Notes: This 177-nucleotide RNA was probed chemically with DMS. Values cover nucleotides 27 to 126. DMS adducts were read by reverse transcription with MarathonRT. It was measured as part of the RMDB library OK2TRN.
RNA sequence: GGGAACGACUCGAGUAGAGUCGAAAAUCUGUGGAGUUGGCUGCUGACAGGGGAACAGCCGUUCCAGCCCUGGCGUAUUUGUCCUCCCUCCCUCCCAAGUGGACCUGACGCUGGACCCUGACACGGCUGACAAGUUUUACUUCGGUAAAACUUGUCAAAAAGAAACAACAACAACAAC
Reactivity to DMS in 0.01 (KOAc 150mM, MgCl2 10mM, bicine 150mM(pH8.5), 24C), signal-to-noise 1, nucleotides 027 to 126: u000c020u000g020u000g030g000a150g010u020u010g030g010c030u010g020c130u020g000a100c080a040g000g000g010g000a100a200c040a060g030c020c070g000u000u000c050c020a080g000c050c050c020u020g010g020c040g020u010a070u010u000u000g000u000c010c010u000c010c000c020u000c000c010c000u020c040c020c020a080a140g000u010g020g000a060c030c090u020g010a060c110g030c020u000g010g040a190c010c020c010u020g000a120c070a050c060g000g000c070